[RMDB]
RNA sequence: GGGAACGACUCGAGUAGAGUCGAAAACUGUCGUGUGUGGAAGUACGUGAGUACUUCACGCUCUACGGGAGUAGAGCCACACACAUCGUGGAGCGAUGUCUUGGAACUACUCCCGUAGUUCACGUAUGACUCACGUCAUACCAAGACGACAGCCACGGAGCAGUGAGGGGUUCGCCCCUCACUGCUCAAAAGAAACAACAACAACAAC
Reactivity to 2A3 in 0.01 (KOAc 150mM, MgCl2 10mM, bicine 150mM(pH8.5), 24C), signal-to-noise 1, nucleotides 027 to 156: c000u010g000u010c000g020u020g030u000g020u010g110g090a000a060g010u080a020c050g000u300g090a070g090u000a030c010u000u000c010a000c010g060c000u030c010u010a000c010g010g010g000a000g000u000a000g000a020g010c000c000a010c000a000c000a000c000a010u000c000g030u060g160g200a150g210c000g000a000u000g030u050c050u030u010g020g000a040a100c000u000a010c000u000c030c000c000g000u000a000g000u020u020c030a020c040g030u010a000u040g010a000c000u020c090a030c120g000u000c000a010u010a010c000c000a100a000g070a020c000g000a000c000a000g020c020c000a050c040g070

Annotation:
Source: RMDB library OK3TST, as collected in RNAgym. An RNA of 207 nucleotides, treated with 2A3 and read out base by base. The 2A3 profile rests on 1,405 reads.